Structure probing data (DMS and 2A3) for a 177-nucleotide construct. Conditions: 150 mM KOAc, 10 mM MgCl2 and 150 mM bicine (pH 8.5), 24 C. It was measured as part of the RMDB library RFMREP. For 2A3 the reverse transcriptase was SuperScript II with manganese.
[RMDB]
RNA sequence: GGGAACGACUCGAGUAGAGUCGAAAACAACGCGGGACAACUUACCAGGGCCAGUUGUAUGACGAAUCUUUGAUGAGUACGACUAAGUGGUGCAUGGCCGUUCACAACAUGUGAGGUGACUUUUAGGGUUGCUUGAUAAGUUCGCUUAUCAAGCAACAAAAGAAACAACAACAACAAC
Reactivity to DMS in 0.01 (KOAc 150mM, MgCl2 10mM, bicine 150mM(pH8.5), 24C), signal-to-noise 2, nucleotides 027 to 126: c100a080a070c070g000c090g010g010g010a130c080a070a060c050u000u030a090c110c040a080g000g000g010c070c060a090g010u000u000g040u000a020u000g000a130c220g010a120a080u010c040u020u000u020g010a040u000g000a200g000u000a040c040g000a060c070u000a060a070g010u010g000g020u010g000c100a080u010g000g030c030c070g000u020u000c050a060c030a070a090c090a080u010g000u000g010a060g000g000u010g000a080c060u000u000u000u000a190g030g000
Reactivity to 2A3 in 0.01 (KOAc 150mM, MgCl2 10mM, bicine 150mM(pH8.5), 24C), signal-to-noise 1, nucleotides 027 to 126: c010a050a000c010g000c010g070g030g000a030c000a060a050c040u030u130a070c030c000a050g100g000g000c030c030a020g000u010u010g000u030a070u090g070a000c060g020a080a100u050c080u110u160u180g080a120u100g020a030g060u050a030c040g040a030c020u050a070a050g080u080g120g030u060g010c030a070u020g030g000c000c010g030u060u000c050a070c050a250a000c010a080u130g020u040g020a040g000g080u070g010a040c050u100u050u030u160a110g170g000